[RMDB]
RNA sequence: GGGAACGACUCGAGUAGAGUCGAAAAGGGUUUUGCGAUCUUUAAGCAGAUGGCAGGUUCACCCCGUACGGUGCGGAAGUUCGCGCUUCCGUGAAACGCGAAAAUCGUACGGUGGCUGCAAGUCGCAUUGAAGGGAUCGCCUUCGGGCGAUCCCUAAGACGUCUGUCUUAUUCGUAAGACAGACGUCAAAAGAAACAACAACAACAAC
Reactivity to 2A3 in 0.01 (KOAc 150mM, MgCl2 10mM, bicine 150mM(pH8.5), 24C), signal-to-noise 1, nucleotides 027 to 156: g110g000g000u090u110u140u080g020c020g000a050u060c080u050u140u080a170a070g020c000a040g020a120u100g120g000c020a020g110g000u070u080c040a080c010c010c000c000g010u000a000c000g040g000u060g000c000g000g000a010a010g010u100u150c080g030c020g000c140u020u030c000c000g000u020g030a070a160a010c100g020c020g030a100a080a030a030u020c000g000u000a000c000g000g020u070g020g000c030u020g000c030a060a000g010u060c060g010c020a010u010u140g100a090a080g030g020g040a010u040c110g000c020c010u060u000c120g080g000g000c000g000a000u000c000c000c000u000a000a000
An RNA of 207 nucleotides, treated with 2A3 and read out base by base. The reactions ran in a buffer of 150 mM KOAc, 10 mM MgCl2 and 150 mM bicine (pH 8.5), at 24 C. The data come from the RNA Mapping Database (RMDB), library M2RFPK.